An RNA of 177 nucleotides, treated with 2A3 and DMS and read out base by base. For DMS, 2,965 sequencing reads were counted. For 2A3, 5,620 sequencing reads were counted. It was measured as part of the RMDB library TTRDES. The RNA was probed in 150 mM KOAc, 10 mM MgCl2 and 150 mM bicine (pH 8.5) at 24 C.
[RMDB]
RNA sequence: GGGAACGACUCGAGUAGAGUCGAAAAGAUAUGGAUUCAGGGUCAAGAUGGUCUGUUUCGGAAACGAAACAAGACCUAAUCUUGACCUGAAUCCUAAGUCAAAACAGGACCAGUUCGCUGGUCCUGAGAUUGAGAACUUCUUCGGAAGUUCUCAAUCAAAAGAAACAACAACAACAAC
Reactivity to 2A3 in 0.01 (KOAc 150mM, MgCl2 10mM, bicine 150mM(pH8.5), 24C), signal-to-noise 2, nucleotides 027 to 126: g030a010u090a040u140g030g000a010u000u010c010a020g210g160g160u090c000a020a000g040a110u090g010g000u000c000u000g000u000u010u000c010g000g020a080a060a050c010g010a000a000a000c040a050a050g000a010c000c000u000a000a030u050c010u000u000g000a000c000c010u000g000a000a000u000c000c000u000a000a010g000u000c040a000a000a150a200c000a000g010g010a000c000c010a000g030u040u100c300g080c170u010g000g000u000c000c000u000g000a010
Reactivity to DMS in 0.01 (KOAc 150mM, MgCl2 10mM, bicine 150mM(pH8.5), 24C), signal-to-noise 3, nucleotides 027 to 126: g000a020u000a300u000g010g000a000u000u000c000a010g000g010g020u000c000a020a000g020a030u010g010g020u000c000u010g000u020u000u010c010g020g000a070a120a200c010g010a010a010a000c000a060a070g010a020c000c010u000a030a040u010c000u000u000g000a060c000c000u010g000a010a000u000c000c000u000a010a060g010u010c020a110a050a180a300c040a010g010g000a020c000c000a020g000u000u020c290g030c000u000g030g000u010c000c020u000g000a010